[RMDB]
Chemical mapping of a 177-nucleotide RNA with DMS. The data come from the RNA Mapping Database (RMDB), library TTRINS. For DMS the reverse transcriptase was MarathonRT.
RNA sequence: GGGAACGACUCGAGUAGAGUCGAAAAGAUAUGGAGAGACCUCUAGCGCUUUGAAGCGUGGACACGUAUAUUCGGAAACGAAUAUAUACGUGUUCGCGUGGAGCGCUGAGAGGUCUCUCCUAAGUCAGUGGACAAUAUUCUUCGGAAUAUUGUCCACAAAAGAAACAACAACAACAAC
Reactivity to DMS in 0.01 (KOAc 150mM, MgCl2 10mM, bicine 150mM(pH8.5), 24C), signal-to-noise 2, nucleotides 027 to 126: g000a030u000a300u010g010g000a020g010a030g000a000c010c000u000c000u000a060g010c010g020c010u020u020u010g020a140a200g010c000g030u000g010g000a000c000a000c000g000u000a000u000a010u010u000c010g000g020a170a140a290c030g010a020a020u000a070u010a040u000a030c000g020u010g000u000u000c000g000c020g010u000g000g000a010g020c000g030c000u000g000a010g000a000g010g010u000c000u000c000u000c000c000u000a000a040g000u010c040a140